[RMDB]
RNA sequence: GGGAACGACUCGAGUAGAGUCGAAAACACCAGGUGGGUCAGGUUGGUCUCGAACUCCUGACCUCAAGUGAUCCACCCGCCUAGGCCUCCCAAAGUACUGGGAUUACAGGCGUGAGCCACUGUGCCCGGCCUAAAACUGUGUUUGAGACAGGGUCUACCAAAAUAUGGGGUUCGCCCCAUAUUUUGGAAAAGAAACAACAACAACAAC
Reactivity to 2A3 in 0.01 (KOAc 150mM, MgCl2 10mM, bicine 150mM(pH8.5), 24C), signal-to-noise 1, nucleotides 027 to 156: c000a020c010c010a020g050g000u090g010g010g000u030c010a010g000g160u130u110g000g030u020c070u090c130g130a130a040c100u040c060c140u080g020a000c000c000u000c020a020a020g000u020g020a040u030c000c010a020c000c000c000g000c000c010u040a030g000g010c020c030u020c010c010c000a060a120a060g170u110a100c170u070g000g000g060a040u070u130a120c070a050g000g000c000g050u070g020a030g020c040c040a120c240u130g000u080g130c000c000c050g030g040c040c000u020a140a160a040a000c040u070g010u010g020u100u130u200g070a040g010a020c020a040g030g020g040u000c000u060a040

Source information: Structure probing data (2A3) for a 207-nucleotide construct. As a SHAPE reagent, 2A3 marks flexible, mostly unpaired nucleotides at the ribose 2'-OH. Source: RMDB library OK3TST, as collected in RNAgym.